An RNA of 177 nucleotides, treated with 2A3 and DMS and read out base by base. The RNA was probed in 150 mM KOAc, 10 mM MgCl2 and 150 mM bicine (pH 8.5) at 24 C. For 2A3 the reverse transcriptase was SuperScript II with manganese. Source: RMDB library OK2TST, as collected in RNAgym. For DMS, 3,038 sequencing reads were counted.
[RMDB]
RNA sequence: GGGAACGACUCGAGUAGAGUCGAAAAACAAGCAAUUCAAGCAGAAUUCAGUGCAAAGUUCCACCCAGGGGGAAAGAUGGACGCAUUGUGAAUGUGACUGUGAUCAGAGGGGACUAUUCUGCAGUUCUAGGCUUCUAUAAUUCGUUAUAGAAGCCUAAAAAGAAACAACAACAACAAC
Reactivity to 2A3 in 0.01 (KOAc 150mM, MgCl2 10mM, bicine 150mM(pH8.5), 24C), signal-to-noise 2, nucleotides 027 to 126: a000c040a080a040g040c020a020a140u190u140c060a120a030g030c020a020g030a050a020u060u060c030a000g010u010g080c050a160a140a070g030u100u030c020c010a040c030c000c030a070g090g030g030g010g090a040a040a090g090a000u070g020g020a000c030g010c020a050u040u040g080u070g140a140a040u080g000u030g100a040c030u040g020u060g080a040u070c020a040g040a100g090g050g000g000a000c010u060a060u060u040c000u050g000c000a020g080u110u080c030
Reactivity to DMS in 0.01 (KOAc 150mM, MgCl2 10mM, bicine 150mM(pH8.5), 24C), signal-to-noise 3, nucleotides 027 to 126: a060c060a090a160g000c080a070a050u020u000c100a100a090g010c020a050g000a040a040u000u010c070a030g030u000g000c030a110a090a110g000u000u000c020c020a120c030c010c030a150g000g010g010g010g010a060a070a060g000a040u000g000g000a060c070g010c030a020u000u000g000u010g000a040a050u000g000u000g000a060c040u000g000u000g010a110u010c070a070g000a120g000g010g010g010a100c050u000a070u000u000c030u000g020c030a160g000u000u000c080